[RMDB]
RNA sequence: GGGAACGACUCGAGUAGAGUCGAAAAUAAAGAUGCGGGUUCUAAAAUUAAACUAUUGCAACAGCAAGUCGAUGCCAAAGAUGCUGCGAUGACAAAAGCGAUUAAAGAUAAAAAUAAAGCGGAAUUAGAAAACAGACAAAUUCGUUUGUCUGUUUUCAAAAGAAACAACAACAACAAC
Reactivity to DMS in 0.01 (KOAc 150mM, MgCl2 10mM, bicine 150mM(pH8.5), 24C), signal-to-noise 1, nucleotides 027 to 126: u030a050a050a070g020a080u000g020c000g020g000g060u000u000c020u040a130a050a070a070u000u050a050a060a110c070u020a030u020u030g010c100a090a100c130a060g000c020a070a090g020u020c050g000a080u000g000c050c080a010a050a120g000a070u020g000c010u000g000c110g020a030u000g050a090c070a020a150a080a130g000c030g020a070u000u000a030a020a150g000a080u000a000a000a070a040a070u000a000a030a160g000c010g040g020a070a040u020u000a260
Reactivity to 2A3 in 0.01 (KOAc 150mM, MgCl2 10mM, bicine 150mM(pH8.5), 24C), signal-to-noise 2, nucleotides 027 to 126: u160a050a100a000g060a040u120g000c040g080g050g000u010u030c030u080a070a180a240a120u120u080a080a080a110c080u020a070u050u130g050c070a080a040c030a070g010c030a040a040g030u000c050g030a030u050g050c040c050a050a050a070g010a020u030g020c010u020g000c000g050a020u090g010a110c000a010a120a010a070g010c010g000a000u030u160a080a250a000g070a040u130a140a090a030a000a050u080a040a050a010g030c080g010g070a000a000u090u030a050

Record summary: The data come from the RNA Mapping Database (RMDB), library OK1LIB. An RNA of 177 nucleotides, treated with DMS and 2A3 and read out base by base. The 2A3 profile rests on 796 reads. For DMS the reverse transcriptase was MarathonRT. For 2A3 the reverse transcriptase was SuperScript II with manganese.